[RMDB]
RNA sequence: GGGAACGACUCGAGUAGAGUCGAAAAAGACGGGAUCAUCACCUGGGAAACCCAGCAGACCGACUACCCGUCGGUGGGCCCGGACCGGCCCGAAUACGAGCCACGAGGUUGUCCCCGUGGCGCGUCGAUCCUGUACUUGAUUCGUCAAGUACAGGAUAAAAGAAACAACAACAACAAC
Reactivity to DMS in 0.01 (KOAc 150mM, MgCl2 10mM, bicine 150mM(pH8.5), 24C), signal-to-noise 9, nucleotides 027 to 126: a110g000a070c010g000g000g010a150u000c060a140u010c070a140c250c010u010g000g000g000a110a140a170c110c010c010a040g020c140a160g010a100c120c050g000a020c060u010a140c090c090c070g000u000c000g000g020u010g000g010g000c010c010c070g000g000a090c100c080g000g000c000c000c000g010a090a070u010a050c010g010a050g000c000c000a010c000g010a030g010g010u000u020g010u010c040c000c010c010g020u000g000g020c010g010c010g000u000c230g000
Reactivity to 2A3 in 0.01 (KOAc 150mM, MgCl2 10mM, bicine 150mM(pH8.5), 24C), signal-to-noise 5, nucleotides 027 to 126: a000g030a020c020g000g010g020a070u070c010a020u030c010a060c040c000u020g000g030g030a230a250a150c030c000c000a010g010c040a030g050a050c030c080g030a010c020u140a140c020c020c020g020u020c010g000g020u060g000g010g020c040c040c030g010g030a040c040c020g030g000c050c010c010g010a050a090u250a050c010g000a020g000c000c000a010c000g040a160g080g090u300u300g220u300c050c000c000c000g000u000g000g010c010g010c000g000u050c070g030